This 177-nucleotide RNA was probed chemically with DMS and 2A3. It was measured as part of the RMDB library OK2TST. For 2A3, 1,242 sequencing reads were counted. For DMS the reverse transcriptase was MarathonRT. The RNA was probed in 150 mM KOAc, 10 mM MgCl2 and 150 mM bicine (pH 8.5) at 24 C.
RNA sequence: GGGAACGACUCGAGUAGAGUCGAAAAUGCUUUUGUAGACAACUGACUAGUGAAGGAAGCAGUGUAUGUGGAGCUUGACUUUCUAGCUAGUCAGCACAUGCACCGCAUCUUUGGGAGGCUGAGGCUACGACUCGACUCGAUUCGUCGAGUCGAGUCGAAAAGAAACAACAACAACAAC
Reactivity to DMS in 0.01 (KOAc 150mM, MgCl2 10mM, bicine 150mM(pH8.5), 24C), signal-to-noise 2, nucleotides 027 to 126: u000g000c010u010u010u010u010g010u040a150g000a120c190a080a150c010u000g010a090c000u010a010g010u000g020a120a140g000g000a020a020g000c000a030g020u000g000u000a030u000g040u000g000g010a200g000c010u000u020g020a070c020u000u000u020c020u000a300g000c070u000a000g010u010c000a010g000c060a020c150a060u010g000c000a060c170c140g000c000a060u000c030u000u000u000g000g000g010a110g000g030c020u000g000a110g000g000c090u000a100
Reactivity to 2A3 in 0.01 (KOAc 150mM, MgCl2 10mM, bicine 150mM(pH8.5), 24C), signal-to-noise 1, nucleotides 027 to 126: u070g010c020u000u130u110u110g010u090a100g010a120c010a130a080c040u050g010a000c000u020a020g060u000g070a200a020g050g000a000a000g010c010a010g000u000g010u080a140u200g180u150g080g120a110g050c000u070u130g090a300c000u000u010u000c020u040a030g000c000u000a010g010u010c000a010g010c030a000c010a010u040g000c000a020c060c010g000c010a070u030c030u080u090u070g090g010g020a060g060g000c030u030g040a030g000g000c030u030a040